[RMDB]
RNA sequence: GGGAACGACUCGAGUAGAGUCGAAAAUUUCCCAUUAAUUUGCUGCUCUAGUCUGUCAGUGAUAGGAGCGGUUAUACGCAUGGGAUAAAACAAUAUUGGGCCACUGUACAUGGAGAUGAAAUGUGUUCUCCAGCCUAAAAUUCGUUUUAGGCUGGAGAAAAGAAACAACAACAACAAC
Reactivity to 2A3 in 0.01 (KOAc 150mM, MgCl2 10mM, bicine 150mM(pH8.5), 24C), signal-to-noise 2, nucleotides 027 to 126: u110u000u000c000c000c000a000u020u060a020a070u090u000u020g030c050u000g000c000u000c000u000a020g040u000c000u000g300u130c050a050g130u060g060a000u000a100g000g000a000g000c040g000g000u150u160a140u030a050c120g190c030a020u090g000g000g150a140u090a020a080a080a000c070a030a070u040a080u100u110g180g000g000c000c020a000c090u000g080u060a010c020a170u170g010g010a000g010a080u020g080a110a000a100u210g050u020g000u020u040
An RNA of 177 nucleotides, treated with 2A3 and read out base by base.
Reactivities are given for positions 27 through 126.
Values are in units of 0.01, from 0 to 300, in steps of 10.